[RMDB]
RNA sequence: GGGAACGACUCGAGUAGAGUCGAAAACCAAUGGGAAACCAUUGGCAACUCGGAAACGAGUUGAAGCGGGAAUUACGUACCAAACCGCCGACAAUGCGAUUUUAAGCAUUGUCGAUUACGCCCAUGUCGAUUUUAAGACAUGGAGCGAAGGUACGAAGCAUCGUGGACCGUUCGCGGUCUAUGAUGCAAAAGAAACAACAACAACAAC
Reactivity to DMS in 0.01 (KOAc 150mM, MgCl2 10mM, bicine 150mM(pH8.5), 24C), signal-to-noise 6, nucleotides 027 to 156: c000c000a010a000u000g010g010g010a220a120a200c000c000a010u000u000g020g030c000a020a030c000u010c010g040g000a170a130a250c010g000a050g010u000u000g020a090a160g020c010g010g000g000a230a130u000u000a140c020g030u000a020c010c000a070a140a140c030c020g000c050c000g000a040c000a020a010u000g020c000g010a300u000u010u000u010a100a300g000c010a010u000u000g000u000c000g000a050u000u000a060c010g030c010c010c000a010u000g010u000c000g020a240u000u000u010u000a090a250g000a030c010a000u010g010g000a040g030c010g000a040a070g020g010u000a000c010g010a160a260
Reactivity to 2A3 in 0.01 (KOAc 150mM, MgCl2 10mM, bicine 150mM(pH8.5), 24C), signal-to-noise 9, nucleotides 027 to 156: c000c000a000a000u010g000g000g010a040a030a030c000c000a000u000u000g000g000c000a000a000c000u000c000g010g030a080a070a050c010g000a010g000u000u000g020a040a000g000c010g000g010g030a110a070u160u100a130c010g000u000a000c000c000a020a030a020c000c000g000c000c000g000a000c000a000a000u000g010c020g150a190u030u070u100u300a110a020g000c000a000u000u000g000u000c000g000a000u000u020a030c010g000c000c000c000a000u000g000u000c020g060a130u050u060u060u300a090a030g000a000c000a000u000g000g010a030g000c000g000a020a040g000g000u000a000c000g000a020a000

The record gives the reactivity of an RNA of 207 nucleotides to DMS and 2A3. The reactions ran in a buffer of 150 mM KOAc, 10 mM MgCl2 and 150 mM bicine (pH 8.5), at 24 C. Source: RMDB library OK3TST, as collected in RNAgym. For DMS the reverse transcriptase was MarathonRT. Reactivities are given for positions 27 through 156.